Chemical mapping of a 207-nucleotide RNA with 2A3.
The data come from the RNA Mapping Database (RMDB), library OK3TST.

RNA sequence: GGGAACGACUCGAGUAGAGUCGAAAAGUUACACUCUCUGAAUUUGUGAAAAUCUGUGUACUGAUGUUUUCGUGAUGUGGUGACAGAGAGGCAGACCAUCAGGAAGACACUCGUCUUAUGGAGAUGGAUUCCUAAGAUAACGAAACAAAUGCCUCACAGACAUAGCAUCGUUCGCGAUGCUAUGUCUAAAAGAAACAACAACAACAAC
Reactivity to 2A3 in 0.01 (KOAc 150mM, MgCl2 10mM, bicine 150mM(pH8.5), 24C), signal-to-noise 1, nucleotides 027 to 156: g010u060u100a020c000a000c000u100c000u090c000u050g040a100a100u290u220u080g160u040g020a000a140a020a060u000c110u050g020u030g000u080a040c110u060g000a010u140g000u030u000u030u120c130g010u010g040a020u090g060u150g000g070u060g000a060c010a060g170a000g000a000g020g020c000a040g060a100c090c000a040u000c030a000g140g000a000a000g000a000c040a000c090u110c100g110u040c050u060u160a210u300g050g000a080g060a160u100g240g000a100u060u000c000c000u000a000a020g020a050u130a180a030c140g040a060a010a000c090a000a050a100u100g000c020c000u000c020a050c050
Background: Reactivities are given for positions 27 through 156. The RNA was probed in 150 mM KOAc, 10 mM MgCl2 and 150 mM bicine (pH 8.5) at 24 C.